[RMDB]
RNA sequence: GGGAACGACUCGAGUAGAGUCGAAAAACGGAUGGUACGCCAUCCGACCAUUGGGUAGAAGCGUUCAAUCAGCACCCUGACGGUGCAGAUGGGAAAUUGCCCAUGAUACGCACCAUACGUGGUGCGAAAAAGCCAUCGGUGUUCGCACCGAUGGCAACUCAAUUGUUAACUUCGGUUAACAAUUGAGAAAAGAAACAACAACAACAAC
Reactivity to DMS in 0.01 (KOAc 150mM, MgCl2 10mM, bicine 150mM(pH8.5), 24C), signal-to-noise 2, nucleotides 027 to 156: a120c010g000g010a040u000g020g020u000a070c250g040c020c000a060u000c040c000g040a060c050c010a150u010u000g010g000g010u000a040g020a100a130g020c090g040u000u000c020a050a050u000c010a150g000c020a030c000c000c040u000g040a200c190g000g020u000g000c010a050g040a030u000g000g010g010a020a140a110u000u010g000c000c010c000a030u000g020a200u000a060c020g000c030a000c010c010a070u000a070c200g030u000g030g000u020g000c060g000a000a020a070a140a110g010c000c010a010u010c020g000g040u010g010u010u000c300g020c000a030c020c010g050a000u000g010g020c010a000a020
Reactivity to 2A3 in 0.01 (KOAc 150mM, MgCl2 10mM, bicine 150mM(pH8.5), 24C), signal-to-noise 4, nucleotides 027 to 156: a010c000g000g000a000u000g010g030u050a040c240g040c030c000a000u010c000c000g000a010c000c000a090u050u080g010g010g000u040a050g030a180a030g050c040g090u070u070c050a050a060u000c010a020g000c000a000c000c020c090u130g190a100c150g000g000u000g000c020a020g020a020u010g000g000g050a040a090a120u060u030g000c000c000c000a000u030g040a010u050a040c020g000c010a010c000c010a010u050a080c260g070u050g000g000u000g000c000g020a040a000a000a010a000g000c000c000a000u010c000g000g000u010g020u020u080c200g030c090a010c000c000g000a000u000g000g000c000a000a000
Structure probing data (DMS and 2A3) for a 207-nucleotide construct. For DMS, 4,044 sequencing reads were counted. It was measured as part of the RMDB library M2RFPK.